[RMDB]
RNA sequence: GGGAACGACUCGAGUAGAGUCGAAAAAGAAGUGGAAGUCUGAUGUCUACUGUGGCAUUUUAAUGUAGGGAAAUUGGUAUGUUUUUAAUAGAACCUAAUUACCAAAGUUAAAGAGUAGGGUCGGGGAGAGUUUUGGAAGUGCUUUCUCCCAUAUUCACCUAUGACAUCUCUUCGGAGAUGUCAUAGGAAAAGAAACAACAACAACAAC
Reactivity to DMS in 0.01 (KOAc 150mM, MgCl2 10mM, bicine 150mM(pH8.5), 24C), signal-to-noise 1, nucleotides 027 to 156: a100g000a110a120g060u000g000g010a080a070g000u010c030u010g010a060u000g000u030c020u000a080c030u000g040u010g030g000c020a060u010u000u010u000a030a070u000g010u010a100g000g020g000a060a160a210u010u000g000g030u000a080u000g010u020u010u000u000u050a030a150u000a070g010a050a090c010c060u000a070a070u000u000a090c040c040a020a100a250g010u000u000a050a080a170g000a120g030u000a120g010g000g030u000c050g000g010g040g010a040g010a010g000u000u000u000u010g010g000a140a110g000u000g010c000u000u000u010c070u000c020c000c020a090u010a040u000u000c100a250
Reactivity to 2A3 in 0.01 (KOAc 150mM, MgCl2 10mM, bicine 150mM(pH8.5), 24C), signal-to-noise 3, nucleotides 027 to 156: a000g040a040a000g030u020g000g030a060a020g050u000c020u100g060a060u050g020u040c050u080a090c050u130g040u060g120g000c020a050u040u020u040u080a140a080u160g020u030a050g000g000g060a060a100a080u070u020g000g010u080a090u100g060u040u050u040u090u090a160a140u110a080g010a030a020c000c020u030a050a030u060u020a030c010c000a070a040a000g020u010u030a070a120a050g030a020g010u030a050g020g010g020u080c050g000g010g010g010a030g000a020g010u050u040u240u070g000g020a050a010g000u020g030c010u030u060u050c110u020c020c000c010a030u050a070u090u080c010a010